Structure probing data (DMS and 2A3) for a 177-nucleotide construct.

RNA sequence: GGGAACGACUCGAGUAGAGUCGAAAAGUGCGCUAUUUCGAUAGCGCACAAAGCCGGCGAGUCUCGCUCGGCGGCGCGCGACAGCGCGCAGCGCAGCCGGAACAUAACGCCACUUCGGUGGCGUUAAGUUAGACUAAGAGUUCGCUCUUAGUCUAACAAAAGAAACAACAACAACAAC
Reactivity to DMS in 0.01 (KOAc 150mM, MgCl2 10mM, bicine 150mM(pH8.5), 24C), signal-to-noise 6, nucleotides 027 to 126: g010u000g010c010g010c000u000a010u000u000u010c170g010a030u000a010g010c000g010c010a000c000a020a060a130g010c010c000g020g000c000g000a100g010u000c040u000c050g000c070u010c080g010g010c010g000g010c020g020c010g010c020g010a170c300a130g010c020g030c000g020c000a020g020c010g020c090a090g000c010c010g010g000a190a120c140a140u000a010a010c000g010c000c000a010c000u000u020c200g030g010u000g000g000c000g000u000u000a000a050
Reactivity to 2A3 in 0.01 (KOAc 150mM, MgCl2 10mM, bicine 150mM(pH8.5), 24C), signal-to-noise 4, nucleotides 027 to 126: g000u000g000c000g000c000u010a010u030u110u040c060g090a020u010a010g010c000g000c000a000c000a000a010a010g030c000c000g010g000c010g010a040g040u030c020u040c130g040c040u080c080g020g020c000g010g010c000g010c000g000c000g080a120c070a200g020c020g000c020g010c030a010g070c040g000c010a010g010c010c000g010g030a040a020c040a050u100a000a000c000g000c010c000a010c010u050u070c230g090g000u000g000g000c000g000u000u000a000a000
For 2A3, 11,451 sequencing reads were counted. 2A3 adducts were read by reverse transcription with SuperScript II with manganese.